[RMDB]
This 207-nucleotide RNA was probed chemically with 2A3 and DMS. DMS adducts were read by reverse transcription with MarathonRT. It was measured as part of the RMDB library OK3TST. The DMS profile rests on 2,165 reads. Conditions: 150 mM KOAc, 10 mM MgCl2 and 150 mM bicine (pH 8.5), 24 C.
RNA sequence: GGGAACGACUCGAGUAGAGUCGAAAAUUACUCUCCGAUGAAACCUAAAGUUAGCAAGGCUUUAUAUUCUUCACUAUCUUUUUUGACUUCAAGUGCAAAUUUUUUAUUUCCGUUUAAUUCAUUUGUUUUACCUGCAUAAUAUAAUGGAGUGCUGUCGAAUACGGAUGUUAUUCGUAACAUCCGUAUUAAAAGAAACAACAACAACAAC
Reactivity to 2A3 in 0.01 (KOAc 150mM, MgCl2 10mM, bicine 150mM(pH8.5), 24C), signal-to-noise 2, nucleotides 027 to 156: u010u000a010c030u010c010u000c040c040g070a100u040g030a190a190a180c000c000u050a090a080a100g040u050u050a000g060c080a050a020g070g010c010u060u110u050a150u070a050u150u080c000u100u030c010a050c020u090a130u160c060u120u180u090u050u100u100g120a060c000u050u030c090a040a010g040u030g070c020a050a060a050u110u170u000u060u090u020a060u130u120u060c010c010g040u000u090u140a120a050u060u050c040a030u080u100u040g110u070u120u030u050a050c000c000u000g100c030a040u060a200a030u160a130u040a170a040u150g050g000a040g020u030g020c050u040g000u030c010g080
Reactivity to DMS in 0.01 (KOAc 150mM, MgCl2 10mM, bicine 150mM(pH8.5), 24C), signal-to-noise 1, nucleotides 027 to 156: u010u000a080c030u000c020u000c060c030g000a130u000g000a070a110a070c050c050u000a050a030a150g000u000u000a070g060c100a110a060g030g000c120u000u010u010a080u010a090u030u000c060u000u000c040a060c020u000a070u000c000u000u020u000u000u000u020g030a040c040u010u000c050a070a100g010u000g000c030a050a060a030u030u010u030u050u000u030a060u070u060u000c020c040g010u020u010u010a090a100u010u010c040a060u000u000u000g020u020u010u000u000a120c050c120u020g020c110a030u000a010a060u010a060u010a020a050u000g010g010a080g020u000g000c030u010g020u000c060g010